The data come from the RNA Mapping Database (RMDB), library OK2TRN.
This 177-nucleotide RNA was probed chemically with 2A3 and DMS.
For 2A3 the reverse transcriptase was SuperScript II with manganese.
The DMS profile rests on 3,209 reads.
For 2A3, 1,459 sequencing reads were counted.
RNA sequence: GGGAACGACUCGAGUAGAGUCGAAAAGACUGUGAGUGUGACACAGUGACAGAGUCACUGUGUCUGUGACACACUGAGUGAGUGUGAGUCUGUCUCUGUCUGUCUCACAGACACAGAGACUCAGUGAUAUGACGCUACUCUUCGGAGUAGCGUCAUAAAAAGAAACAACAACAACAAC
Reactivity to 2A3 in 0.01 (KOAc 150mM, MgCl2 10mM, bicine 150mM(pH8.5), 24C), signal-to-noise 1, nucleotides 027 to 126: g050a030c000u000g010u010g020a080g110u190g010u130g110a050c000a000c000a030g000u010g000a020c030a060g120a000g070u000c000a010c010u000g010u000g000u040c010u010g010u020g010a000c010a000c000a000c060u060g050a020g130u170g050a030g020u090g030u030g030a040g090u050c010u020g130u010c000u000c000u030g060u030c030u090g050u020c010u000c050a000c020a020g000a000c020a000c000a000g000a000g000a010c010u000c010a060g040u070g060a040
Reactivity to DMS in 0.01 (KOAc 150mM, MgCl2 10mM, bicine 150mM(pH8.5), 24C), signal-to-noise 2, nucleotides 027 to 126: g000a060c010u000g010u000g000a090g030u000g020u010g010a070c010a010c000a010g000u000g000a040c010a270g010a120g010u000c000a060c010u000g000u000g020u000c000u000g010u000g030a140c030a040c020a060c010u010g000a090g020u000g000a040g020u000g010u000g000a180g010u000c030u010g010u000c000u000c000u000g010u010c100u020g010u010c130u000c020a010c010a030g010a060c040a020c010a000g010a030g000a020c110u000c030a050g000u000g000a220